[RMDB]
Source: RMDB library OK1LIB, as collected in RNAgym. Chemical mapping of a 177-nucleotide RNA with 2A3 and DMS. Reactivities are rounded to 0.1 and cut off at 0 and 3.
RNA sequence: GGGAACGACUCGAGUAGAGUCGAAAAGACGCCUGUGUGGCGAAGCGAGGAUGAGAAAGAGCCGCAGAUUAAACAGUCCAUCUAGCGGCAAGAUGGAUUGCUCGCAAAAAGAUCCAUAUCACAGAGAACUGCCAUGCUAGUUCGCUAGCAUGGCAGUAAAAGAAACAACAACAACAAC
Reactivity to 2A3 in 0.01 (KOAc 150mM, MgCl2 10mM, bicine 150mM(pH8.5), 24C), signal-to-noise 1, nucleotides 027 to 126: g110a010c000g040c000c000u080g070u050g060u060g160g000c060g000a040a020g030c000g040a000g070g000a060u150g000a100g160a050a090a000g200a040g020c010c000g000c070a010g040a070u080u060a000a000a190c040a040g000u080c050c000a000u000c000u000a060g000c040g020g000c040a070a000g000a000u000g010g000a000u000u020g090c000u000c000g000c000a040a040a040a040a040g040a010u000c030c040a110u050a050u140c040a020c020a150g130a010g020a120
Reactivity to DMS in 0.01 (KOAc 150mM, MgCl2 10mM, bicine 150mM(pH8.5), 24C), signal-to-noise 1, nucleotides 027 to 126: g000a160c160g010c080c010u000g010u000g070u030g000g060c030g000a060a090g000c020g030a020g020g010a020u000g000a300g000a050a100a090g010a250g000c030c090g000c000a070g000a100u010u020a080a210a130c220a090g000u020c110c080a030u000c110u000a070g000c070g040g000c080a000a000g000a100u000g000g000a140u000u000g000c070u000c020g000c000a040a040a150a200a120g000a000u000c000c010a130u010a030u000c030a000c070a020g000a180g000a180
For 2A3, 676 sequencing reads were counted.